[RMDB]
RNA sequence: GGGAACGACUCGAGUAGAGUCGAAAAGGGAAGCGCGAUCAUCUUGAUCGCUGGGGCACUACAGACCUCGGCGCCCUGGCGGCGAAGCAAUGCGCACAGCUCUUCGGCGCGGCGAGCGGAUGUCACCCGCAGCUGUAAGAUUCGUCUUACAGCUGCGAAAAGAAACAACAACAACAAC
Reactivity to 2A3 in 0.01 (KOAc 150mM, MgCl2 10mM, bicine 150mM(pH8.5), 24C), signal-to-noise 1, nucleotides 027 to 126: g070g020g010a060a070g090c020g000c020g050a020u060c020a010u060c030u140u170g050a110u010c000g000c000u000g010g000g000g010c000a010c020u210a050c070a090g140a300c020c050u070c130g000g020c040g000c000c000c020u020g040g020c010g040g000c010g030a020a000g070c070a090a060u130g000c030g000c000a030c050a080g000c020u000c000u050u000c020g040g000c020g020c020g080g000c020g010a000g020c000g000g070a100u100g060u060c040a130c060c030
Reactivity to DMS in 0.01 (KOAc 150mM, MgCl2 10mM, bicine 150mM(pH8.5), 24C), signal-to-noise 2, nucleotides 027 to 126: g000g000g000a130a160g020c040g000c000g000a060u000c080a100u000c140u020u010g010a010u010c010g030c010u010g000g030g000g030c020a070c050u000a120c120a090g020a110c070c020u000c040g000g000c030g000c040c000c000u000g000g010c070g010g010c080g000a020a050g000c260a080a060u030g020c050g000c080a040c110a200g010c000u010c020u010u000c090g010g010c020g000c010g000g030c030g010a120g000c050g000g010a070u000g000u000c070a130c040c050
Chemical mapping of a 177-nucleotide RNA with 2A3 and DMS. The RNA was probed in 150 mM KOAc, 10 mM MgCl2 and 150 mM bicine (pH 8.5) at 24 C. For 2A3 the reverse transcriptase was SuperScript II with manganese.